[RMDB]
Structure probing data (2A3 and DMS) for a 177-nucleotide construct. For DMS the reverse transcriptase was MarathonRT.
RNA sequence: GGGAACGACUCGAGUAGAGUCGAAAACAAAGUUGUAAUGGCGUAUACAUUACAGACUUUAAUGUCAUAUGCAUUACAGAUACGUAUAAUUGUAUCUUCUACACGACGGACCUCAGCUCCACACAUAGUGCAGCUAAUGGUUCGCCAUUAGCUGCACAAAAGAAACAACAACAACAAC
Reactivity to 2A3 in 0.01 (KOAc 150mM, MgCl2 10mM, bicine 150mM(pH8.5), 24C), signal-to-noise 1, nucleotides 027 to 126: c000a000a040a050g090u080u030g000u020a030a000u050g200g000c050g000u060a020u020a040c010a000u070u030a030c070a080g080a040c020u070u060u060a030a040u010g020u080c090a020u020a000u070g030c020a030u020u030a050c030a040g050a070u050a020c010g100u180a090u070a300a130u110u070g000u000a010u040c000u070u070c030u040a020c030a010c060g070a010c040g000g030a010c000c000u000c020a040g000c010u080c050c000a020c010a010c000a070u080a050
Reactivity to DMS in 0.01 (KOAc 150mM, MgCl2 10mM, bicine 150mM(pH8.5), 24C), signal-to-noise 2, nucleotides 027 to 126: c130a050a080a140g020u000u010g000u000a010a000u000g000g060c060g040u000a000u000a040c020a000u000u000a050c300a180g010a110c200u020u020u000a020a040u000g000u000c220a010u010a050u000g000c010a030u000u000a040c080a030g010a030u000a040c040g030u010a150u020a090a080u020u000g010u000a030u000c020u010u010c090u000a030c080a050c090g010a090c060g010g000a110c010c030u000c150a040g010c030u000c110c030a050c070a110c260a050u010a120
For 2A3 the reverse transcriptase was SuperScript II with manganese.